[RMDB]
RNA sequence: GGGAACGACUCGAGUAGAGUCGAAAAGAAACAACUGAAGCUUCAACGCCUUUUUUUCCUAUCUUCUUAAGCACCGGGCUAGGGAGUAAGCCCGUGGAACCUUAGUUUUGUUCCCUCGGGACUUACUUGUGGUUCCUGUGGUGCACUCCUGACCCUGACACCUACUUCGUUUCGACGAAGUAGGUGUAAAAGAAACAACAACAACAAC
Reactivity to 2A3 in 0.01 (KOAc 150mM, MgCl2 10mM, bicine 150mM(pH8.5), 24C), signal-to-noise 1, nucleotides 027 to 156: g050a000a000a000c070a030a010c130u140g090a080a000g020c020u140u120c100a040a070c090g040c000c060u020u120u020u000u000u170u030c020c000u070a140u180c050u190u030c060u140u090a080a010g000c060a070c090c000g010g010g020c010u040a080g040g020g000a000g010u080a020a000g000c000c000c000g000u000g000g000a010a000c010c000u060u020a030g060u070u130u050u220g070u100u010c010c000c010u040c070g050g010g000a040c000u000u000a000c010u010u050g070u100g070g000u040u010c020c040u030g080u210g000g000u060g000c070a000c010u000c000c000u020g010a020c010c010c000u010g090
Source: RMDB library VIROID, as collected in RNAgym. An RNA of 207 nucleotides, treated with 2A3 and read out base by base. The RNA was probed in 150 mM KOAc, 10 mM MgCl2 and 150 mM bicine (pH 8.5) at 24 C. Values cover nucleotides 27 to 156. For 2A3, 653 sequencing reads were counted. Reactivities are rounded to 0.1 and cut off at 0 and 3.